Chemical mapping of a 207-nucleotide RNA with 2A3 and DMS. For 2A3 the reverse transcriptase was SuperScript II with manganese. The DMS profile rests on 6,877 reads. For 2A3, 14,850 sequencing reads were counted. It was measured as part of the RMDB library RNAMAK. Conditions: 150 mM KOAc, 10 mM MgCl2 and 150 mM bicine (pH 8.5), 24 C.
RNA sequence: GGGAACGACUCGAGUAGAGUCGAAAAGCUAGUGUUUCGACACUAGCAAAAAGGGGUCCUCGGGUCGAGGGACAUGCUCUGAAGCCUCCACGGAGCAACAGCCUCCCCACCGACAUGAGGACGGAGGCACCCAAAAAGGGUAAGUUCGCUUACCCAACUUAUAUUCGGUAUUCGUACCGAAUAUAAGAAAAGAAACAACAACAACAAC
Reactivity to 2A3 in 0.01 (KOAc 150mM, MgCl2 10mM, bicine 150mM(pH8.5), 24C), signal-to-noise 7, nucleotides 027 to 156: g000c000u000a000g010u010g020u050u100u160c250g060a010c010a000c010u000a000g010c000a010a020a020a020a010g120g000g020g010u020c020c000u010c040g060g010g000u040c040g040a300g010g010g010a020c030a060u060g010c000u000c000u010g020a080a020g010c000c000u000c000c000a010c010g010g000a000g050c010a020a060c090a050g090c020c050u040c010c020c010c020a130c060c030g030a030c010a050u050g010a000g000g000a000c000g000g000a000g000g000c000a030c000c000c010a020a050a030a030a040g010g000g000u010a000a000g010u040u130c200g010c130u010u010a010c000c000c000a010a020
Reactivity to DMS in 0.01 (KOAc 150mM, MgCl2 10mM, bicine 150mM(pH8.5), 24C), signal-to-noise 3, nucleotides 027 to 156: g030c000u000a020g040u000g000u000u000u000c200g050a260c000a010c010u000a020g010c010a000a000a010a090a100g030g010g030g010u000c010c010u010c010g010g000g010u010c060g010a090g010g030g020a070c070a230u000g010c010u000c010u000g010a060a140g000c020c010u000c010c030a300c040g010g020a050g000c000a030a070c140a170g010c060c040u000c020c070c120c110a060c040c010g000a060c020a050u000g000a090g000g010a020c030g020g030a040g070g030c020a120c010c020c020a020a050a110a080a080g010g020g010u000a010a050g000u000u010c150g020c020u010u000a030c000c000c000a010a050